[RMDB]
RNA sequence: GGGAACGACUCGAGUAGAGUCGAAAAUAAAAGGACAUCGAAAUGCGCCUCUGCAACCUCCAGCUGGUGUUGUCUGGGAACCUGAUCAAAACUACCGAGUUUGAUCAGGCCAAUGCAGAGAAAAAAAUACAUAUAGCGUGUUCGCACGCUAUAUGUAAAAAGAAACAACAACAACAAC
Reactivity to DMS in 0.01 (KOAc 150mM, MgCl2 10mM, bicine 150mM(pH8.5), 24C), signal-to-noise 3, nucleotides 027 to 126: u000a060a020a060a080g010g010a060c030a020u000c090g000a070a070a110u010g030c110g020c120c010u000c020u000g010c000a040a140c110c070u010c010c010a040g000c020u000g030g020u000g010u000u000g000u000c010u000g010g000g010a120a140c000c010u000g000a010u000c000a000a000a020a020c020u000a220c180c180g010a110g010u000u000u000g010a010u000c010a000g010g010c040c080a050a090u000g000c000a030g010a040g000a000a000a010a090a060a040a100
Reactivity to 2A3 in 0.01 (KOAc 150mM, MgCl2 10mM, bicine 150mM(pH8.5), 24C), signal-to-noise 1, nucleotides 027 to 126: u080a010a090a010a000g080g010a030c010a020u070c100g110a080a090a100u100g030c030g040c010c010u000c000u040g020c010a000a080c040c000u010c010c000a020g000c020u110g030g140u120g030u130u090g050u060c010u020g010g010g000a000a020c000c000u000g010a000u000c000a020a020a030a080c020u110a170c010c130g050a070g100u000u000u000g010a000u000c000a000g000g000c020c020a010a000u010g010c010a000g040a000g000a080a030a000a000a000a000a010